[RMDB]
RNA sequence: GGGAACGACUCGAGUAGAGUCGAAAAAUAAAUAAAGUGUACCAAAUGGUAGGUACACACCAAGUGUGCGUUGGUCGCACACAACCAGCAGUCAAUAGAGACUGCAAAACCAAACGAAAGAAAAAAACCAUAAUAAGAUGUUCGCAUCUUAUUAUGGAAAAGAAACAACAACAACAAC
Reactivity to DMS in 0.01 (KOAc 150mM, MgCl2 10mM, bicine 150mM(pH8.5), 24C), signal-to-noise 2, nucleotides 027 to 126: a000u020a130a000a090u010a110a030a160g010u000g010u000a000c010c010a040a090a070u010g020g040u000a090g030g020u000a000c000a000c010a140c090c130a050a160g010u000g010u000g000c000g030u000u030g020g000u010c010g020c000a000c000a010c020a040a050c110c070a090g020c000a000g010u000c020a120a150u000a150g000a170g010a000c010u000g020c010a030a020a090a090c070c050a020a040a070c230g000a100a050a140g030a030a010a070a070a040a100a100
Reactivity to 2A3 in 0.01 (KOAc 150mM, MgCl2 10mM, bicine 150mM(pH8.5), 24C), signal-to-noise 3, nucleotides 027 to 126: a000u060a000a060a010u180a040a070a050g010u020g000u000a000c010c000a040a080a190u220g110g060u080a080g000g010u000a000c000a000c010a010c000c020a120a140g000u000g000u000g010c030g040u070u160g300g090u250c010g000c000a000c000a000c010a000a030c020c020a010g030c010a000g000u000c000a000a130u110a290g160a000g000a050c000u000g020c000a000a030a000a030c030c010a090a030a020c070g150a110a070a140g140a040a150a040a010a030a020a060